[RMDB]
RNA sequence: GGGAACGACUCGAGUAGAGUCGAAAAGUCCCGUAGAUAUAUUCUCUUUUUGAGGUUUUGUGUAUGAUUUUUUCUUGAGUAGGAUCCGUUGGAUAUCGGGUUUGAAUGUGGGAGGCAUCAACUUCCACGAUGAAGUCUAAUUCGUUAGACUUCAUCGAAAAGAAACAACAACAACAAC
Reactivity to DMS in 0.01 (KOAc 150mM, MgCl2 10mM, bicine 150mM(pH8.5), 24C), signal-to-noise 5, nucleotides 027 to 126: g010u010c010c010c010g000u040a070g000a120u020a060u010a050u020u020c010u000c010u000u000u000u010u010g010a050g000g010u000u000u000u010g020u010g010u010a070u010g000a030u000u010u000u000u000u000c020u000u000g000a110g000u010a160g010g010a010u000c010c000g010u010u010g010g010a130u030a080u010c030g010g000g000u000u000u000g000a070a090u000g040u000g000g000g000a020g010g000c180a120u040c240a050a120c020u000u000c010c010a040
Reactivity to 2A3 in 0.01 (KOAc 150mM, MgCl2 10mM, bicine 150mM(pH8.5), 24C), signal-to-noise 3, nucleotides 027 to 126: g100u000c040c000c020g020u100a070g050a050u070a010u010a070u260u060c020u060c040u080u200u160u120u300g060a070g000g010u100u080u130u120g040u020g000u030a130u140g130a300u030u000u000u040u030u100c070u030u070g040a050g000u000a020g000g000a040u010c020c000g050u050u100g110g020a030u070a050u300c020g000g000g000u040u020u030g050a080a050u090g000u000g020g000g000a000g010g110c040a150u000c010a130a090c010u000u040c020c000a000